[RMDB]
RNA sequence: GGGAACGACUCGAGUAGAGUCGAAAAACCAUGCAUAAGAAUGUUCACGCACACUUUAGAUUUUCUAAAGCACACAUGAAUCCAAAAACCUGCUACAAAUAGCGAUUUUCUGAAGCACGUUUUUGGACAUUAUAACCCUGUUCGCAGGGUUAUAAUGAAAAGAAACAACAACAACAAC
Reactivity to DMS in 0.01 (KOAc 150mM, MgCl2 10mM, bicine 150mM(pH8.5), 24C), signal-to-noise 7, nucleotides 027 to 126: a160c010c000a090u030g020c090a070u020a100a090g010a110a090u010g010u000u000c030a060c080g010c080a100c210a110c020u010u000u010a010g000a150u000u010u020u010c020u010a010a030a030g010c110a100c150a110c140a060u020g000a090a130u000c010c000a020a010a010a010a010c010c070u000g010c000u000a090c040a020a030a060u010a070g010c230g000a130u010u000u010u010c130u000g000a110a020g010c000a000c260g000u000u000u000u000u000g000g000a060
Reactivity to 2A3 in 0.01 (KOAc 150mM, MgCl2 10mM, bicine 150mM(pH8.5), 24C), signal-to-noise 9, nucleotides 027 to 126: a000c020c000a040u090g030c030a100u130a190a060g060a200a050u110g030u130u120c060a030c090g050c010a040c010a010c070u020u040u050a030g020a110u210u130u100u070c010u030a020a020a030g060c050a040c010a000c000a100u110g110a070a030u040c000c000a000a000a010a000a010c000c030u010g020c010u030a050c030a060a140a090u090a080g110c120g140a100u090u070u060u050c080u100g030a040a000g000c000a000c010g000u000u000u000u000u000g000g000a000
An RNA of 177 nucleotides, treated with DMS and 2A3 and read out base by base. Source: RMDB libraries RFM100 and RFMREP, as collected in RNAgym. Conditions: 150 mM KOAc, 10 mM MgCl2 and 150 mM bicine (pH 8.5), 24 C.